[RMDB]
RNA sequence: GGGAACGACUCGAGUAGAGUCGAAAAGAAACGCAAGGCCGCUGACUGACGGGAUAUUGUGGGGCUUACCACAGGGGACGCGGCGUUAUCACUUGCCUUUUAAGCCGACCGUCUGGGCUGCAUACAAACCACCCAACUAUCUUCGGAUAGUUGGGAAGAGUCGAGCUUAGUUCGCUAAGCUCGACUCAAAAGAAACAACAACAACAAC
Reactivity to 2A3 in 0.01 (KOAc 150mM, MgCl2 10mM, bicine 150mM(pH8.5), 24C), signal-to-noise 1, nucleotides 027 to 156: g000a000a090a000c110g040c040a030a030g130g050c000c000g000c090u070g000a020c020u060g000a000c010g010g030g030a000u140a150u300u200g000u040g050g000g100g190c120u110u130a030c000c020a040c000a010g000g000g020g030a000c030g000c040g040g100c000g010u050u010a060u070c010a000c100u010u080g010c010c070u100u200u000u080a060a000g000c000c040g030a030c000c010g040u000c010u040g060g000g000c040u040g000c020a070u060a140c050a000a100a070c020c000a010c010c010c000a000a000c000u000a010u000c000u000u010c060g060g010a000u000a000g030u000u000g000g000g000a010a000